[RMDB]
RNA sequence: GGGAACGACUCGAGUAGAGUCGAAAACGUCGUGAACUAGCGACAAUGCAUUAGGUCCAUCGUUAUCUAACCGAAACAUCGUGACUAGUAGUAGAAUAGAACCACGAGAGGGCGCUGGCAAACAAAGACGGAGUGUAGGAUUCGUUUUACGCUCCGUAAAAGAAACAACAACAACAAC
Reactivity to DMS in 0.01 (KOAc 150mM, MgCl2 10mM, bicine 150mM(pH8.5), 24C), signal-to-noise 9, nucleotides 027 to 126: c120g000u010c030g020u010g010a100a100c110u020a120g010c020g000a040c050a110a080u020g010c060a070u010u020a070g010g000u000c020c020a080u010c080g010u010u010a100u020c060u020a090a080c150c050g000a100a080a100c090a090u000c040g010u010g010a080c030u000a050g010u010a080g000u030a060g000a090a140u010a040g000a070a080c110c060a020c020g000a060g000a070g000g010g000c020g000c020u000g000g010c050a060a060a090c130a060a080a090g000
Reactivity to 2A3 in 0.01 (KOAc 150mM, MgCl2 10mM, bicine 150mM(pH8.5), 24C), signal-to-noise 9, nucleotides 027 to 126: c050g000u010c010g010u020g080a130a070c050u030a100g010c000g020a010c010a020a050u080g010c020a040u050u090a030g000g030u000c010c010a040u030c050g030u030u050a090u070c060u050a030a070c040c020g050a040a030a030c040a080u060c030g050u040g090a110c050u020a020g110u040a000g030u020a020g070a120a050u070a050g030a060a040c050c000a010c010g020a030g020a080g030g020g000c020g000c020u010g000g000c000a020a050a030c040a020a110a010g110